[RMDB]
The record gives the reactivity of an RNA of 177 nucleotides to DMS and 2A3. High DMS reactivity at an A or C suggests that its Watson-Crick edge is free. The RNA was probed in 150 mM KOAc, 10 mM MgCl2 and 150 mM bicine (pH 8.5) at 24 C. For 2A3 the reverse transcriptase was SuperScript II with manganese. The data come from the RNA Mapping Database (RMDB), library OK2TST.
RNA sequence: GGGAACGACUCGAGUAGAGUCGAAAAUAUGAGCAGUGUGUCGAUAACUGGAAGUCAUUUGCCGGUGUAAGGUUUGGCUGCUUCAUGCCCCUGAGUUUAGACAGUGACCUUACUAUGUACUUAAAGGCAAGUAUGGGUGUUUCGACACCCAUACUUGAAAAGAAACAACAACAACAAC
Reactivity to DMS in 0.01 (KOAc 150mM, MgCl2 10mM, bicine 150mM(pH8.5), 24C), signal-to-noise 4, nucleotides 027 to 126: u020a060u010g000a050g010c020a020g020u010g030u010g000u010c030g010a120u010a050a030c040u000g010g010a090a070g010u020c180a110u010u000u010g020c020c010g010g020u000g000u010a040a100g000g000u000u010u010g020g000c000u010g000c040u010u000c020a060u000g010c080c010c010c070u000g000a090g010u010u000u010a090g000a090c050a040g000u000g000a080c030c030u000u000a080c040u010a080u010g010u000a040c120u010u000a060a110a120g010g010
Reactivity to 2A3 in 0.01 (KOAc 150mM, MgCl2 10mM, bicine 150mM(pH8.5), 24C), signal-to-noise 3, nucleotides 027 to 126: u210a020u020g030a000g020c030a010g030u040g000u010g040u210c040g060a070u050a160a050c010u000g050g020a090a030g100u120c120a200u030u090u260g090c020c000g040g020u050g020u020a060a000g010g030u030u100u160g110g000c000u000g020c000u060u100c030a040u070g040c000c020c000c010u090g090a130g150u120u110u080a120g020a050c040a010g040u030g080a020c000c010u050u000a020c010u050a030u190g090u050a070c030u080u160a120a000a050g050g000